[RMDB]
RNA sequence: GGGAACGACUCGAGUAGAGUCGAAAAUCAUGGUGGUUCGCCACCAUGAACUGUCUAGUCGCUAGAAAACGAUCAAAACUAGCGAGUAGACUAACGAUCGAACUGGGGGACAGUUCGCUGUCCCCAAUACUGUAGACGAUUUCGAUCGUCUACAGUAAAAAGAAACAACAACAACAAC
Reactivity to DMS in 0.01 (KOAc 150mM, MgCl2 10mM, bicine 150mM(pH8.5), 24C), signal-to-noise 3, nucleotides 027 to 126: u000c000a000u000g010g040u000g000g010u000u010c220g040c000c000a010c000c000a000u000g000a040a140c120u010g010u000c010u000a020g000u000c010g000c000u010a000g010a080a030a100a170c110g000a110u000c100a060a060a070a180c000u010a010g030c010g000a000g000u000a000g000a030c000u000a020a060c200g000a050u000c110g010a090a070c190u000g000g010g020g020g010a060c020a010g010u000u010c140g000c030u000g020u000c010c010c000c030a030a020
Reactivity to 2A3 in 0.01 (KOAc 150mM, MgCl2 10mM, bicine 150mM(pH8.5), 24C), signal-to-noise 2, nucleotides 027 to 126: u040c010a000u010g000g000u010g020g040u010u060c160g000c080c010a000c000c000a000u000g010a020a030c000u010g000u010c010u020a040g200u020c020g000c010u000a020g070a070a220a040a060c120g120a210u210c090a050a050a040a180c000u000a000g020c000g000a000g010u000a010g010a000c010u000a040a040c040g060a100u180c060g020a060a060c080u150g140g020g010g010g010a000c000a010g010u040u000c080g010c070u010g000u000c010c010c010c010a000a000